[RMDB]
RNA sequence: GGGAACGACUCGAGUAGAGUCGAAAAGGGGUCAAUGAAAGACGAGAGGUUGAGACAUGUCCUGAAGCCUCCACGGGACAACAGCUCAACUACCCACCUCGGGGAGUUGACGGAGGCACCCAAAAGAUAUCGACUUGGUUCGCCAAGUCGAUAUCAACCUCUCCUUAGACUUCGGUCUAAGGAGAGGAAAAGAAACAACAACAACAAC
Reactivity to 2A3 in 0.01 (KOAc 150mM, MgCl2 10mM, bicine 150mM(pH8.5), 24C), signal-to-noise 2, nucleotides 027 to 156: g000g010g030g010u040c080a050a080u260g140a240a090a000g080a000c030g010a010g000a000g090g000u000u020g020a020g020a080c100a210u200g020u000c010c010u050g030a130a050g000c000c000u000c000c000a000c050g000g040g020a000c030a090a030c040a100g060c000u000c010a030a000c010u050a040c050c070c000a060c010c040u020c030g040g000g050g020a060g010u030u070g040a020c030g000g000a000g000g000c010a030c010c020c000a000a160a030a030g010a000u000a000u000c000g000a000c010u000u040g000g010u060u070c240g020c070c000a000a000g000u000c000g000a000u000a000u000c000a010a000